Chemical mapping of a 177-nucleotide RNA with DMS.
DMS adducts were read by reverse transcription with MarathonRT.
The reactions ran in a buffer of 150 mM KOAc, 10 mM MgCl2 and 150 mM bicine (pH 8.5), at 24 C.
DMS (dimethyl sulfate) methylates the pairing face of unpaired adenines and cytosines.
RNA sequence: GGGAACGACUCGAGUAGAGUCGAAAAGAUAUGGAACGUAGGAGUGGAGUCGGCUCUCGGAAACGAGAGGCGACUGCGAAGCUCUACGUUCCUAAGUCAAACAGGACGAUGUUCGCAUCGUCCUGAACGUUUUAAAGCUCUUCGGAGCUUUAAAACGAAAAGAAACAACAACAACAAC
Reactivity to DMS in 0.01 (KOAc 150mM, MgCl2 10mM, bicine 150mM(pH8.5), 24C), signal-to-noise 1, nucleotides 027 to 126: g020a000u000a190u010g010g010a030a000c000g000u000a020g010g000a000g120u000g000g000a160g040u000c000g010g010c000u000c000u000c010g040g000a070a050a130c010g000a000g000a010g020g000c000g020a020c000u000g000c190g000a120a300g000c000u000c000u000a000c010g020u000u000c010c000u000a000a010g000u000c000a150a110a300c010a000g000g000a030c000g000a020u000g000u000u020c300g000c000a010u000c000g040u000c000c020u000g000a030a050